The record gives the reactivity of an RNA of 177 nucleotides to 2A3 and DMS.
For 2A3 the reverse transcriptase was SuperScript II with manganese.
Conditions: 150 mM KOAc, 10 mM MgCl2 and 150 mM bicine (pH 8.5), 24 C.

RNA sequence: GGGAACGACUCGAGUAGAGUCGAAAAGAUAUGGACAGCGAAGAACACAAUACCGAUGAAAUCGGAAACGAUGGAGGUGAUGUGGGAGCUGUCCUAAGUCAAACGGGUAUCGUUCGCGAUACCCGAAGUAUUUUUCAUCCUUCGGGAUGAAAAAUACAAAAGAAACAACAACAACAAC
Reactivity to 2A3 in 0.01 (KOAc 150mM, MgCl2 10mM, bicine 150mM(pH8.5), 24C), signal-to-noise 2, nucleotides 027 to 126: g000a010u060a050u120g000g010a000c020a000g010c000g260a300a030g010a220a020c010a000c020a030a060u080a080c010c010g170a280u080g050a060a040a000u000c000g050g030a060a020a030c030g000a010u040g020g040a000g000g000u050g000a100u090g000u000g000g070g000a000g000c000u000g000u030c000c010u020a020a000g020u000c030a000a080a100c020g000g000g000u020a000u000c030g030u070u140c300g000c010g170a000u010a020c010c000c000g000a000a000
Reactivity to DMS in 0.01 (KOAc 150mM, MgCl2 10mM, bicine 150mM(pH8.5), 24C), signal-to-noise 2, nucleotides 027 to 126: g000a040u000a300u010g030g000a030c010a000g000c000g040a130a200g000a070a150c020a000c010a040a140u020a030c000c010g000a130u020g020a110a060a050u000c010g000g010a060a070a100c000g000a010u000g010g000a060g040g000u000g020a080u000g000u000g000g000g020a120g000c020u000g000u000c000c010u010a000a040g020u000c030a030a100a250c020g020g000g010u000a000u000c000g000u000u000c200g020c020g010a010u000a000c020c000c000g000a000a020
DMS (dimethyl sulfate) methylates the pairing face of unpaired adenines and cytosines.